[RMDB]
RNA sequence: GGGAACGACUCGAGUAGAGUCGAAAACGCUGGCGUCGGGCAGCUCGCCGGCGAUGGAUUCGAGAAUGUCGGUCAGGGUCAGCAGGCCGAUGAACUCGCCGAACUCGUUGACCACGAAGGCCACGUAACUGAGGGAUAUGUUCGCAUAUCCCUCAGUAAAAGAAACAACAACAACAAC
Reactivity to DMS in 0.01 (KOAc 150mM, MgCl2 10mM, bicine 150mM(pH8.5), 24C), signal-to-noise 3, nucleotides 027 to 126: c030g030c170u000g010g010c000g020u010c080g000g000g020c030a060g010c070u010c080g020c080c010g000g000c020g020a040u000g000g010a210u010u010c050g020a120g010a150a080u010g020u010c050g010g010u000c010a130g000g000g000u010c060a060g010c040a090g000g000c060c000g000a030u010g010a140a140c140u010c030g000c040c030g000a070a170c110u010c070g000u000u000g000a100c010c010a090c080g000a050a080g010g000c010c010a050c050g010u000a080
Reactivity to 2A3 in 0.01 (KOAc 150mM, MgCl2 10mM, bicine 150mM(pH8.5), 24C), signal-to-noise 1, nucleotides 027 to 126: c010g030c160u030g030g010c010g060u020c010g010g080g060c010a020g020c000u000c060g080c020c010g000g030c000g000a000u000g030g040a080u080u070c050g010a010g040a230a120u170g040u040c020g050g030u020c060a070g150g020g010u080c010a030g040c010a010g050g030c000c020g020a020u030g030a030a020c000u000c000g000c000c000g010a090a040c020u010c050g010u040u050g070a230c020c000a160c080g030a030a000g090g000c040c050a020c000g020u060a080